[RMDB]
RNA sequence: GGGAACGACUCGAGUAGAGUCGAAAAUCAUAUCAUGAGAUGUUAGGUUAAGUCGCGCAACGAGCGCAACGCUUGUCUUAUGUUGCCAGCGCGUUAUAGCGCGGACUCGUAAGAGACUGCCGGCGUCAGUAUUAUUGAAAUUCGUUUCAAUAAUACUAAAAGAAACAACAACAACAAC
Reactivity to 2A3 in 0.01 (KOAc 150mM, MgCl2 10mM, bicine 150mM(pH8.5), 24C), signal-to-noise 9, nucleotides 027 to 126: u070c010a020u120a050u170c110a100u170g110a040g000a130u030g030u080u080a160g050g010u060u130a070a020g020u030c010g000c010g010c140a060a060c090g030a020g010c030g000c080a030a030c070g030c050u060u080g060u060c020u040u110a080u150g110u100u040g050c030c030a100g000c010g000c030g020u060u140a120u130a100g000c000g000c000g000g050a080c010u000c010g020u020a030a020g020a000g010a040c030u040g030c020c000g020g000c000g000u010c000
Reactivity to DMS in 0.01 (KOAc 150mM, MgCl2 10mM, bicine 150mM(pH8.5), 24C), signal-to-noise 9, nucleotides 027 to 126: u020c070a080u040a080u030c120a080u030g010a110g010a020u000g010u010u000a070g020g010u000u020a080a060g010u010c030g010c100g020c120a130a120c070g000a050g020c060g010c090a050a030c070g010c100u010u010g000u020c070u020u010a040u010g010u020u010g010c030c080a110g010c000g010c000g000u010u050a060u050a120g000c020g000c010g010g010a100c010u000c010g010u010a040a060g000a070g010a050c050u000g000c010c010g000g010c010g010u010c040